[RMDB]
RNA sequence: GGGAACGACUCGAGUAGAGUCGAAAAUCGGGGCCGAUGAUCGCCACCAUCGUUGACGGCACGGGUCUGCUCAUCUACUUCCUGGUCGCGCACCUGACGCUGACCGAGCUGCACGGCUUGUGAGCGGCACUCAGUCACGUUUCGACGUGACUGAGUGAAAAGAAACAACAACAACAAC
Reactivity to 2A3 in 0.01 (KOAc 150mM, MgCl2 10mM, bicine 150mM(pH8.5), 24C), signal-to-noise 6, nucleotides 027 to 126: u100c030g000g010g020g020c020c020g050a050u110g030a040u070c030g000c000c010a030c020c020a070u070c050g070u080u110g080a070c030g010g010c040a020c030g000g020g050u030c040u020g010c020u020c030a100u020c030u090a070c040u050u040c010c020u030g030g000u020c020g000c010g000c050a080c040c050u050g040a030c020g000c050u050g030a050c010c030g010a020g000c010u070g010c050a040c130g020g010c030u020u030g050u040g060a060g010c000g000g010
Reactivity to DMS in 0.01 (KOAc 150mM, MgCl2 10mM, bicine 150mM(pH8.5), 24C), signal-to-noise 3, nucleotides 027 to 126: u000c070g010g010g000g020c050c010g000a060u020g010a080u010c040g000c020c010a070c070c070a060u010c040g020u010u000g000a120c130g000g000c060a080c040g010g010g000u000c010u000g000c020u000c030a060u020c080u030a080c220u000u000c060c020u010g010g000u000c010g020c060g000c090a120c040c050u020g010a060c020g000c010u040g030a060c100c010g050a040g010c040u010g000c080a110c150g000g000c010u000u000g020u020g030a060g020c050g020g000
An RNA of 177 nucleotides, treated with 2A3 and DMS and read out base by base. Conditions: 150 mM KOAc, 10 mM MgCl2 and 150 mM bicine (pH 8.5), 24 C. Source: RMDB library OK1LIB, as collected in RNAgym. Reactivities are given for positions 27 through 126. The DMS profile rests on 6,580 reads. Values are in units of 0.01, from 0 to 300, in steps of 10.